[RMDB]
RNA sequence: GGGAACGACUCGAGUAGAGUCGAAAACGCGCUUCUCAACGACCUCAGCCGGAGAAUCUCAUUCUUAGAGCAGAAGGGCGCAUAAACCAGUUCUUCGUUGCUGAGAUCUGGAUCGCGUGGUUCGAUCAAUGACUCGACGAUUCGUCGUCGAGUCAUUAAAAGAAACAACAACAACAAC
Reactivity to 2A3 in 0.01 (KOAc 150mM, MgCl2 10mM, bicine 150mM(pH8.5), 24C), signal-to-noise 1, nucleotides 027 to 126: c000g020c000g020c040u090u000c010u020c000a000a260c100g000a000c010c000u040c000a040g020c000c010g000g000a000g020a000a020u040c090u000c030a150u270u000c070u090u190a130g010a050g180c090a030g050a170a130g100g040g000c000g000c090a110u300a020a110a030c100c030a000g020u000u020c000u000u030c000g180u100u220g000c000u000g000a000g000a000u000c000u000g080g000a000u000c000g000c040g040u000g010g000u050u070c020g010a080u030c020
Reactivity to DMS in 0.01 (KOAc 150mM, MgCl2 10mM, bicine 150mM(pH8.5), 24C), signal-to-noise 1, nucleotides 027 to 126: c000g040c000g000c270u000u010c080u060c250a210a080c160g000a030c090c000u000c020a000g000c020c000g000g060a000g000a020a050u020c010u010c110a160u070u010c050u000u000a060g020a190g050c140a080g000a040a160g000g020g000c150g000c140a040u020a030a140a130c000c040a120g010u000u010c000u000u010c020g000u050u000g000c000u000g000a020g020a010u000c000u020g000g000a000u020c000g040c000g000u000g010g000u010u030c020g000a150u030c050